[RMDB]
RNA sequence: GGGAACGACUCGAGUAGAGUCGAAAACUUACCCGUCUGAAAGCAGCUCUGAGUAAAGCACAGAACAAGGCUCAAGUCUGGAAGAUGCUGACGAAGGAAUUCAAGUUGAAGGCGCAGAGCAAACAGAACACGGAGAAGCUGUACGCAAAAGCGGUCGGUUUACUGAAUCGUUCGCGAUUCAGUAAACAAAAGAAACAACAACAACAAC
Reactivity to DMS in 0.01 (KOAc 150mM, MgCl2 10mM, bicine 150mM(pH8.5), 24C), signal-to-noise 2, nucleotides 027 to 156: c030u000u020a070c000c010c000g000u020c090u010g010a090a120a130g060c040a200g010c060u010c010u010g000a300g030u010a070a050a140g030c030a120c030a140g010a030a140c060a090a090g040g000c010u000c030a070a060g050u000c050u010g010g040a080a120g020a080u000g040c060u000g010a140c140g000a080a090g000g020a080a110u000u020c020a030a150g040u010u040g010a050a050g030g000c050g010c040a000g000a080g000c030a050a100a130c050a090g010a100a050c080a100c040g000g000a070g000a080a160g020c030u010g010u000a050c020g000c020a100a020a080a240g030c030g010g010u000c020g030
Reactivity to 2A3 in 0.01 (KOAc 150mM, MgCl2 10mM, bicine 150mM(pH8.5), 24C), signal-to-noise 2, nucleotides 027 to 156: c010u040u060a050c010c010c000g060u010c040u070g130a210a040a010g070c010a010g000c020u000c010u050g040a040g050u100a070a100a040g080c040a040c000a080g070a120a050c060a070a030g050g000c010u020c090a050a090g030u000c000u000g030g000a050a000g010a040u040g000c010u020g000a030c060g020a070a000g040g010a010a010u020u090c030a030a090g010u060u040g070a040a000g020g010c060g000c070a000g020a020g010c030a030a030a010c030a020g070a050a020c040a010c160g080g050a120g000a110a000g010c030u030g050u080a030c020g010c000a000a000a180a170g040c040g040g020u110c070g060
This 207-nucleotide RNA was probed chemically with DMS and 2A3. For 2A3 the reverse transcriptase was SuperScript II with manganese. High DMS reactivity at an A or C suggests that its Watson-Crick edge is free. The reactions ran in a buffer of 150 mM KOAc, 10 mM MgCl2 and 150 mM bicine (pH 8.5), at 24 C.